[RMDB]
Description: Chemical mapping of a 177-nucleotide RNA with DMS and 2A3. The RNA was probed in 150 mM KOAc, 10 mM MgCl2 and 150 mM bicine (pH 8.5) at 24 C. For 2A3, 23,211 sequencing reads were counted.
RNA sequence: GGGAACGACUCGAGUAGAGUCGAAAAGAUAUGGAGAAGUCUUCAACAGCAUCACCCAUCGGAAACGAUGGUUGAUGACAUGAAGUCACUCCUAAGUCAAACUAGAUAUAGUUCGCUAUAUCUAGAAUCUAUAUCUAUUGUUCGCAAUAGAUAUAGAAAAAGAAACAACAACAACAAC
Reactivity to DMS in 0.01 (KOAc 150mM, MgCl2 10mM, bicine 150mM(pH8.5), 24C), signal-to-noise 8, nucleotides 027 to 126: g000a030u000a300u000g000g000a010g010a150a130g020u000c000u000u010c000a040a100c280a180g000c010a010u010c010a000c060c000c000a010u000c000g010g000a100a060a120c000g010a010u000g000g000u000u000g000a010u000g000a040c110a200u010g000a010a000g010u000c040a200c000u000c000c000u010a050a120g010u000c020a100a090a250c010u000a000g000a020u000a000u000a000g000u000u010c230g010c010u000a000u010a000u000c000u000a000g000a100a080
Reactivity to 2A3 in 0.01 (KOAc 150mM, MgCl2 10mM, bicine 150mM(pH8.5), 24C), signal-to-noise 7, nucleotides 027 to 126: g000a010u050a030u090g020g010a020g030a300a090g060u000c010u020u000c020a180a160c060a200g210c000a010u000c000a000c000c010c000a000u000c000g000g010a050a030a020c010g000a000u000g010g000u000u010g000a000u000g070a050c020a060u070g000a000a000g010u010c020a030c020u000c000c000u010a080a010g030u020c040a040a090a160c010u000a000g000a010u010a000u000a010g030u040u070c240g000c110u000a000u000a000u020c000u000a010g010a010a040